Source: RMDB library OK2TST, as collected in RNAgym. Structure probing data (DMS) for a 177-nucleotide construct. The DMS profile rests on 2,154 reads.
RNA sequence: GGGAACGACUCGAGUAGAGUCGAAAACACCAUUAUUUUUAGGUGCCCAAUUGUAUGUCCCUACUCAAGAUGAUAUUGGUACACCGGGCCGUUUAGCGGAAUGGAUGAGUAAGUAUGGUUGCACAGAACUCACCCCUAUAUUCGUAUAGGGGUGAGUAAAAGAAACAACAACAACAAC
Reactivity to DMS in 0.01 (KOAc 150mM, MgCl2 10mM, bicine 150mM(pH8.5), 24C), signal-to-noise 3, nucleotides 027 to 126: c110a090c000c010a080u020u000a090u010u000u020u000u010a090g010g020u000g000c300c010c020a060a050u010u000g010u000a060u000g010u000c030c020c010u010a080c120u000c110a090a090g010a050u020g000a130u000a090u000u010g010g020u020a110c040a060c020c030g010g000g010c050c060g020u000u000u000a110g010c030g000g000a060a070u000g010g000a050u000g010a070g000u000a020a050g010u000a060u000g010g020u000u000g040c090a100c130a130g010a100